[RMDB]
RNA sequence: GGGAACGACUCGAGUAGAGUCGAAAAACGCUUCUUUGUGGACCGGACCUGACUCUCCAGGAAUCUGGGAACCCGCUAUUUCACUCUAUUUUGGGACAAGAAAAAGGGGCUCUUUGGGGCCACUUCCCAUCUCCACAGGAUUCGUCCUGUGGAGAUGAAAAGAAACAACAACAACAAC
Reactivity to 2A3 in 0.01 (KOAc 150mM, MgCl2 10mM, bicine 150mM(pH8.5), 24C), signal-to-noise 2, nucleotides 027 to 126: a000c100g010c070u180u050c060u100u220u200g080u270g020g090a130c000c010g020g000a000c010c000u030g030a140c010u060c060u080c300c000a000g050g010a100a240u000c010u030g070g000g030a110a160c000c020c000g000c020u070a100u010u020u020c000a010c010u000c000u000a040u050u200u110u230g060g020g030a040c040a150a000g150a100a080a050a030a040g010g000g000g010c000u000c020u040u180u200g150g050g020g000c000c000a030c000u070u070c000c010
Reactivity to DMS in 0.01 (KOAc 150mM, MgCl2 10mM, bicine 150mM(pH8.5), 24C), signal-to-noise 1, nucleotides 027 to 126: a060c190g010c050u020u010c110u010u010u000g040u000g000g020a170c040c000g000g010a070c030c010u020g000a160c120u020c160u010c060c010a000g010g000a130a150u000c000u000g010g000g000a070a090c030c130c060g030c060u000a250u010u000u000c010a020c000u010c010u010a020u010u000u010u000g040g000g010a090c050a190a180g000a040a070a070a030a030g000g000g000g020c020u000c000u000u000u000g070g000g000g000c010c030a010c030u020u000c010c000